[RMDB]
RNA sequence: GGGAACGACUCGAGUAGAGUCGAAAACACAAUUCUCUAAGCGAUGAGAAGGGUGUGGAAAAUUAGGGAAGGGCUACGGCUAUAAUCCUAAGAAAGCUUAUCUACAAGCGGAGGUAUUCUCAGAACGAAAACCAUUUGGCGUUCGCGCCAAAUGGAACGCAAUGUAUUCCUUCGGGAAUACAUUGCGAAAAGAAACAACAACAACAAC
Reactivity to 2A3 in 0.01 (KOAc 150mM, MgCl2 10mM, bicine 150mM(pH8.5), 24C), signal-to-noise 1, nucleotides 027 to 156: c010a000c000a000a050u020u010c010u020c040u080a220a180g050c070g120a060u070g020a050g000a000a010g090g000g000u040g010u070g010g030a030a130a040a040u080u050a030g000g010g030a050a090g060g000g000c000u010a030c160g030g000c010u000a020u030a150a040u100c010c020u010a000a010g040a080a080a000g020c010u050u050a060u160c030u080a100c070a140a000g000c000g030g010a010g020g010u070a050u120u030c020u010c050a110g080a050a010c030g080a030a100a030a090c000c000a000u000u000u000g000g000c000g080u050u120c220g030c000g000c060c000a000a000a000u000g000g000a000a000
This 207-nucleotide RNA was probed chemically with 2A3. 2A3 adducts were read by reverse transcription with SuperScript II with manganese. The RNA was probed in 150 mM KOAc, 10 mM MgCl2 and 150 mM bicine (pH 8.5) at 24 C.